[RMDB]
RNA sequence: GGGAACGACUCGAGUAGAGUCGAAAAGAUAUGGACACUAGAUCCACUAUCUCGGUAGGGAGUCGGUGUCGGAAACGACAUGACCGACGAAGAACUACACGAGAUAGUGGAUCUAGUGUCCUAAGUCCAUUUAGUAUACGUUCGCGUAUACUAAAUGAAAAGAAACAACAACAACAAC
Reactivity to DMS in 0.01 (KOAc 150mM, MgCl2 10mM, bicine 150mM(pH8.5), 24C), signal-to-noise 6, nucleotides 027 to 126: g010a080u010a300u000g010g000a010c010a000c010u000a010g010a020u000c010c000a010c010u000a000u000c000u010c010g020g000u000a010g000g000g010a090g020u000c000g020g020u000g010u000c010g020g000a120a100a270c000g000a020c010a160u020g050a130c010c010g000a010c010g010a090a140g000a130a240c010u000a000c000a130c010g000a010g010a000u000a000g020u000g000g000a000u000c000u000a000g010u000g000u000c000c000u000a000a070g010u000c050